The data come from the RNA Mapping Database (RMDB), library M2PK90.
This 177-nucleotide RNA was probed chemically with DMS and 2A3.
RNA sequence: GGGAACGACUCGAGUAGAGUCGAAAAUCUAUCACCAGCCCAUGUUUACGACACGAAUGGGCUGUUGCAAAUUACGUAUAGCUCUUGCAACAUCGUGUCGAAACGUUCCCAAGCUAAACGCCACAAAGACACUCCUAGUAUUCGUACUAGGAGUGUCAAAAGAAACAACAACAACAAC
Reactivity to DMS in 0.01 (KOAc 150mM, MgCl2 10mM, bicine 150mM(pH8.5), 24C), signal-to-noise 3, nucleotides 027 to 126: u020c000u000a100u010c070a070c130c070a090g000c020c020c020a100u010g020u000u000u020a070c030g000a020c000a000c000g010a040a110u020g020g010g030c050u000g000u010u000g020c060a030a020a110u010u020a070c110g020u000a100u010a130g040c090u010c130u000u000g010c000a020a010c100a020u010c030g000u000g010u000c010g000a010a030a200c030g000u000u010c010c000c000a130a160g010c130u010a020a070a150c150g000c020c130a050c150a080a080a120
Reactivity to 2A3 in 0.01 (KOAc 150mM, MgCl2 10mM, bicine 150mM(pH8.5), 24C), signal-to-noise 3, nucleotides 027 to 126: u050c010u020a120u070c030a000c090c020a010g040c000c010c000a020u070g090u080u100u060a100c010g000a000c000a010c010g060a140a090u080g050g000g000c010u010g010u000u010g000c000a010a060a090u220u100a060c080g080u140a070u110a230g040c030u020c010u060u030g000c000a010a030c000a050u030c010g000u000g000u010c000g000a030a020a000c010g000u010u000c000c000c000a010a010g000c010u100a130a060a030c060g030c040c020a080c030a080a130a000
For DMS the reverse transcriptase was MarathonRT. 2A3 adducts were read by reverse transcription with SuperScript II with manganese. For DMS, 1,992 sequencing reads were counted.